[RMDB]
RNA sequence: GGGAACGACUCGAGUAGAGUCGAAAAAUCAUGAGUAGACGAUUUAGUUAUGCAGCGAAAGCUGAUGGUGGUUAUCAAGUACUGUUUGAAGGUACUGUAAUUGAUAAUGCAAGUACUGUCAAAGAAGUGUUCCUUGUCCAUUCGUGGACAAGGAACAAAAAGAAACAACAACAACAAC
Reactivity to DMS in 0.01 (KOAc 150mM, MgCl2 10mM, bicine 150mM(pH8.5), 24C), signal-to-noise 1, nucleotides 027 to 126: a050u000c050a070u000g030a080g000u000a070g010a090c110g010a120u000u010u000a080g000u000u000a070u000g020c020a000g010c020g000a060a070a160g000c010u010g000a070u000g000g030u000g000g020u000u000a050u010c130a020a070g020u000a020c040u000g000u000u000u000g000a150a070g030g010u000a020c000u000g010u000a060a040u000u000g000a060u000a030a110u000g000c060a050a100g020u000a050c020u020g000u000c010a070a050a060g030a100a060g000